[RMDB]
RNA sequence: GGGAACGACUCGAGUAGAGUCGAAAAUAAAAACACUCUUCUUUGACGAUCGGCCCAAUUAUGUGCUUGCAACAAAACUAGCAAGAAAAAUUCUUCGAUAAUCAUAGUUGGCGUGUUAGCAAUAAAAGGUAAAUACGCGAUUCGUCGCGUAUUUACCAAAAGAAACAACAACAACAAC
Reactivity to DMS in 0.01 (KOAc 150mM, MgCl2 10mM, bicine 150mM(pH8.5), 24C), signal-to-noise 1, nucleotides 027 to 126: u030a040a090a040a030a000c100a010c000u000c040u000u000c020u000u010u110g000a010c210g000a180u000c000g050g000c070c060c010a060a100u050u000a020u050g040u010g000c020u000u000g010c050a090a070c210a190a050a040a090c210u010a050g090c040a000a010g000a070a010a020a020a140u040u000c000u000u000c060g000a050u000a100a080u000c120a090u000a000g000u020u000g000g000c300g020u000g030u000u000a020g030c030a100a040u020a020a010a010a060
Reactivity to 2A3 in 0.01 (KOAc 150mM, MgCl2 10mM, bicine 150mM(pH8.5), 24C), signal-to-noise 4, nucleotides 027 to 126: u160a000a060a000a000a000c030a000c030u050c000u030u020c010u130u040u230g050a070c120g160a220u020c010g040g020c000c030c000a030a060u090u060a070u090g080u070g050c010u010u010g000c020a060a040c000a040a210a040a050c070u080a040g040c040a030a080g100a090a090a000a000a000u080u020c060u040u040c020g140a150u110a140a070u240c040a020u000a070g010u010u030g050g040c190g020u030g010u010u030a020g020c100a040a020u190a120a130a000a000